[RMDB]
RNA sequence: GGGAACGACUCGAGUAGAGUCGAAAAGAAAGAAAGAAAAGCAUCAGUUUUCAAGAUGGUGGAACUGUCGCCCCGGUUUUCCUCCAAAAUCGGACGCCUCGGUGGCAACAUGUGUGGGGCGUCUGAAAAACACAAACCACUUCGGUGGUUUGUGUUUAAAAGAAACAACAACAACAAC
Reactivity to DMS in 0.01 (KOAc 150mM, MgCl2 10mM, bicine 150mM(pH8.5), 24C), signal-to-noise 1, nucleotides 027 to 126: g050a110a120a160g000a070a070a050g000a050a040a100a060g030c070a090u000c090a050g030u000u020u000u020c040a100a090g000a050u010g000g060u000g010g020a040a070c040u020g010u000c050g020c030c020c050c000g030g000u030u010u040u070c000c010u030c100c080a140a050a160a120u010c020g000g020a040c000g000c020c000u000c010g050g000u090g010g000c230a130a100c050a040u000g040u020g020u020g000g000g000g000c000g020u000c000u020g000a000a020
Reactivity to 2A3 in 0.01 (KOAc 150mM, MgCl2 10mM, bicine 150mM(pH8.5), 24C), signal-to-noise 1, nucleotides 027 to 126: g130a010a050a000g020a030a090a000g000a030a130a000a000g050c010a020u080c010a000g090u000u010u050u080c000a040a050g020a150u040g080g070u010g010g050a130a060c040u070g020u100c060g000c000c000c000c000g020g020u050u000u020u020c010c000u040c040c020a070a000a040a180u050c020g000g000a000c000g000c000c010u010c000g070g000u050g030g060c040a050a060c010a020u190g140u030g050u190g000g000g000g000c000g000u000c000u010g000a010a000
This 177-nucleotide RNA was probed chemically with DMS and 2A3. For 2A3, 634 sequencing reads were counted. Conditions: 150 mM KOAc, 10 mM MgCl2 and 150 mM bicine (pH 8.5), 24 C. For 2A3 the reverse transcriptase was SuperScript II with manganese.